RNA sequence: GGGAACGACUCGAGUAGAGUCGAAAACAGGAAUGGCUUGGGACCCCACUCUCUGCAGGGUCCGCGUUCCAUCCUUUCUUACCUGGUGGCCGGCAUGGUCCCAGCCUCCUCGCUGGCGCCGGCUGGGCAUAGGGCAUCAGUUCGCUGAUGCCCUAUGAAAAGAAACAACAACAACAAC
Reactivity to DMS in 0.01 (KOAc 150mM, MgCl2 10mM, bicine 150mM(pH8.5), 24C), signal-to-noise 2, nucleotides 027 to 126: c280a070g010g010a070a020u000g000g020c070u000u000g020g030g000a020c010c020c020c040a090c100u030c150u010c120u010g040c150a110g000g010g000u000c010c020g020c110g000u020u010c030c000a040u010c010c020u000u000u020c060u000u000a160c050c030u010g020g030u010g010g000c020c010g000g020c030a120u020g030g000u020c220c000c000a040g010c010c090u010c110c060u000c150g010c020u010g000g010c080g000c020c000g000g020c020u010g010g000g020
An RNA of 177 nucleotides, treated with DMS and read out base by base. It was measured as part of the RMDB library VIROID. Conditions: 150 mM KOAc, 10 mM MgCl2 and 150 mM bicine (pH 8.5), 24 C.